[RMDB]
RNA sequence: GGGAACGACUCGAGUAGAGUCGAAAAGAUAUGGACCUCGUUGAAAGGGAGCCUGGUUCUCGGAAACGAGAGAGAGGGCGACGAUCUGGAGAGGUCCUAAGUCAAAAGUGGUUCUUCGGAACCACAAUCGUAUUGUCUUGUUCGCAAGACAAUACGAAAAAGAAACAACAACAACAAC
Reactivity to DMS in 0.01 (KOAc 150mM, MgCl2 10mM, bicine 150mM(pH8.5), 24C), signal-to-noise 4, nucleotides 027 to 126: g000a040u000a300u010g000g000a030c000c000u000c000g010u010u010g010a160a170a070g000g000g000a050g020c000c000u000g010g030u000u010c000u000c000g000g000a060a060a150c010g020a010g000a010g000a100g010a240g000g000g010c000g020a070c200g000a030u010c000u000g000g000a090g010a020g010g010u000c000c000u000a000a060g010u000c040a080a050a120a130g020u000g000g000u000u000c000u000u010c230g010g000a020a000c000c000a000c010a030a060
Reactivity to 2A3 in 0.01 (KOAc 150mM, MgCl2 10mM, bicine 150mM(pH8.5), 24C), signal-to-noise 4, nucleotides 027 to 126: g020a010u030a020u100g000g000a000c000c000u000c020g130u170u090g250a300a150a000g010g010g000a000g000c010c030u120g070g070u120u010c010u000c010g000g010a070a050a030c020g000a010g010a000g040a010g100a230g020g000g000c020g070a180c010g000a010u010c010u020g050g060a110g000a000g130g000u010c000c000u000a000a010g010u000c020a000a010a070a110g000u000g000g020u000u010c000u030u080c290g120g010a010a000c000c000a000c000a000a040